Annotation:
Chemical mapping of a 177-nucleotide RNA with 2A3 and DMS. For DMS the reverse transcriptase was MarathonRT. The RNA was probed in 150 mM KOAc, 10 mM MgCl2 and 150 mM bicine (pH 8.5) at 24 C. For 2A3 the reverse transcriptase was SuperScript II with manganese. The 2A3 profile rests on 1,437 reads.
RNA sequence: GGGAACGACUCGAGUAGAGUCGAAAACGACGACGCGCUGGCACAGGCUCAACAAGGUGCUGUACGAUCGCCAGCCGCAGUGGAACCCCUUGCAGAGACUUCAGUUGCCUUUGCGGAAAACGGUGGAGCAUAUGGAGGAGUUCGCUCCUCCAUAUGCAAAAGAAACAACAACAACAAC
Reactivity to 2A3 in 0.01 (KOAc 150mM, MgCl2 10mM, bicine 150mM(pH8.5), 24C), signal-to-noise 1, nucleotides 027 to 126: c000g050a000c000g050a040c020g000c010g000c000u010g020g050c000a000c010a060g050g050c040u040c050a020a290c040a140a140g210g000u090g120c040u010g050u060a070c100g050a220u120c050g020c000c010a010g020c000c010g070c020a010g000u050g010g070a050a070c010c000c010c010u010u160g000c020a040g020a030g020a090c020u130u210c230a240g030u150u060g060c000c000u020u070u090g050c010g050g040a070a130a030a010c030g010g080u080g030g030a040
Reactivity to DMS in 0.01 (KOAc 150mM, MgCl2 10mM, bicine 150mM(pH8.5), 24C), signal-to-noise 2, nucleotides 027 to 126: c050g000a120c030g010a100c030g000c100g020c020u010g000g030c000a080c040a150g050g030c050u020c030a100a050c280a150a090g010g020u000g010c010u010g020u010a130c200g020a100u010c170g000c000c010a090g010c040c050g010c040a130g010u000g030g000a120a140c030c030c010c090u000u020g000c050a040g000a050g000a020c030u010u000c170a070g010u000u010g010c000c010u000u000u010g000c040g000g000a020a050a080a060c120g030g000u000g000g020a250